[RMDB]
RNA sequence: GGGAACGACUCGAGUAGAGUCGAAAAGAAUCUGAUCGUAACGUCUUUGGCAGGAUUGCUUUACCGCUUUCCGUCUGGCAAACAUUUAACUGUUAACUAUGAACUGGUACGGACAAGGGGAAUCUGACUCUCUUCAAGGCUUCGGCCUUGAAGAGAGAAAAGAAACAACAACAACAAC
Reactivity to DMS in 0.01 (KOAc 150mM, MgCl2 10mM, bicine 150mM(pH8.5), 24C), signal-to-noise 1, nucleotides 027 to 126: g070a000a040u000c000u000g110a040u000c190g000u130a010a050c160g010u000c020u040u060u000g000g010c020a110g000g040a030u050u000g000c070u000u000u060a050c070c020g020c000u000u000u000c000c000g000u090c000u010g000g000c030a070a100a130c060a020u020u110u000a000a040c270u020g000u000u000a000a140c300u040a130u060g000a200a070c090u050g010g000u100a000c020g000g000a000c150a040a020g000g000g080g000a120a000u000c050u020g000a300
Reactivity to 2A3 in 0.01 (KOAc 150mM, MgCl2 10mM, bicine 150mM(pH8.5), 24C), signal-to-noise 2, nucleotides 027 to 126: g080a000a050u180c070u130g000a060u100c020g040u110a160a000c050g030u000c000u040u030u020g080g000c080a110g020g110a120u000u100g030c000u080u100u030a110c010c010g090c070u000u080u000c000c000g030u010c010u020g050g000c010a070a040a000c000a050u100u130u060a040a060c090u040g030u240u040a060a090c110u050a190u200g090a020a000c050u050g000g060u160a000c020g010g060a060c100a020a070g000g010g000g030a000a090u010c000u000g000a040

Overview:
Chemical mapping of a 177-nucleotide RNA with DMS and 2A3. Conditions: 150 mM KOAc, 10 mM MgCl2 and 150 mM bicine (pH 8.5), 24 C. Reactivities are given for positions 27 through 126. The 2A3 profile rests on 922 reads.